[RMDB]
The record gives the reactivity of an RNA of 207 nucleotides to 2A3 and DMS. Reactivities are given for positions 27 through 156. Source: RMDB library RNAMAK, as collected in RNAgym.
RNA sequence: GGGAACGACUCGAGUAGAGUCGAAAAAUCGGCUUCGGCCGAUAACGCUGAUAUGGAUAGCUUUAUAGUCCUCCCGGUCCCGUUGAAAUCGGAAACGAUGGAGGGACCGAGGAGGACAUAGAGCUAUCCUAAGUCUAUUGGGAUGCUUCGGCAUCAAAGAAAUUGUUCAUUUCGAUGAACAAUUUCUAAAAGAAACAACAACAACAAC
Reactivity to 2A3 in 0.01 (KOAc 150mM, MgCl2 10mM, bicine 150mM(pH8.5), 24C), signal-to-noise 2, nucleotides 027 to 156: a020u000c010g000g030c030u100u080c230g170g030c000c000g000a000u010a010a010c080g080c160u070g040a040u030a060u230g030g000a000u000a000g000c020u050u010u010a030u030a080g000u020c010c000u000c000c000c000g000g010u000c000c000c000g090u130u030g020a020a030a000u000c010g010g060a050a060a100c010g000a000u030g030g020a020g000g000g000a000c000c010g000a050g010g010a000g000g000a000c000a000u000a000g000a000g000c000u000a000u000c000c000u000a000a000g000u010c010u060a230u200u300g170g030g000a010u030g020c030u050u070c240g160g000c010a000u000c030a040a070
Reactivity to DMS in 0.01 (KOAc 150mM, MgCl2 10mM, bicine 150mM(pH8.5), 24C), signal-to-noise 2, nucleotides 027 to 156: a030u000c000g050g020c000u000u010c300g020g010c030c010g010a020u000a010a090c060g000c080u000g000a110u000a290u010g000g010a030u000a000g060c000u000u010u020a010u020a200g040u000c000c000u000c000c010c000g000g000u000c000c000c000g000u000u000g010a100a210a050u000c020g010g010a230a070a260c010g030a030u010g040g020a290g040g020g010a010c000c060g040a030g040g000a020g000g000a000c000a000u000a000g020a040g010c000u000a020u000c010c050u000a000a090g020u000c090u000a110u010u020g020g060g010a070u020g010c000u000u000c140g070g000c040a030u000c060a020a150